RNA sequence: GGGAACGACUCGAGUAGAGUCGAAAAGGGGCUGCGCAAGGAGGAAGUGGUGGCCAACCAGGUACGAAAGCGUUACCUGCGCGAAGAGCUCAGCGAUCUCAACCAAAGAAUCCAGACGUACUGCGAAGACCUGGAAAGUCGCGUGUCCGAGGCGGAGUCUGCACAAAAGUUUCGACUUUUGUGCAGAAAAAGAAACAACAACAACAAC
Reactivity to 2A3 in 0.01 (KOAc 150mM, MgCl2 10mM, bicine 150mM(pH8.5), 24C), signal-to-noise 2, nucleotides 027 to 156: g070g000g000g050c030u060g070c040g000c050a010a110g040g030a040g010g040a010a040g040u070g070g000u020g020g070c040c010a030a000c030c010a040g030g030u030a040c030g120a270a070a010g040c020g010u020u040a040c030c010u020g030c040g000c040g040a050a040g020a020g070c020u010c070a040g000c030g090a110u010c000u020c070a080a100c010c040a030a110a020g070a020a000u090c030c040a010g040a070c020g030u060a040c060u060g000c050g030a060a000g020a030c000c000u000g000g000a080a010a000g010u000c000g020c000g030u030g010u050c000c030g000a030g000g020c000g000g000a010g030
Reactivity to DMS in 0.01 (KOAc 150mM, MgCl2 10mM, bicine 150mM(pH8.5), 24C), signal-to-noise 1, nucleotides 027 to 156: g000g000g040g000c030u000g000c060g010c020a140a120g010g020a090g010g000a030a190g040u000g010g040u000g020g020c040c020a070a150c030c000a040g000g020u000a060c020g040a120a160a180g020c040g000u000u000a080c090c030u030g030c100g020c000g020a120a170g010a110g000c010u010c030a040g010c060g000a110u000c070u000c010a110a170c040c030a050a110a100g000a140a110u000c020c050a100g040a140c030g010u000a110c030u000g000c130g030a100a050g000a070c070c000u010g000g010a020a150a080g020u000c090g000c040g010u000g030u000c070c060g010a200g040g000c040g000g000a140g000
This 207-nucleotide RNA was probed chemically with 2A3 and DMS. The DMS profile rests on 1,890 reads. For 2A3 the reverse transcriptase was SuperScript II with manganese. Reactivities are rounded to 0.1 and cut off at 0 and 3.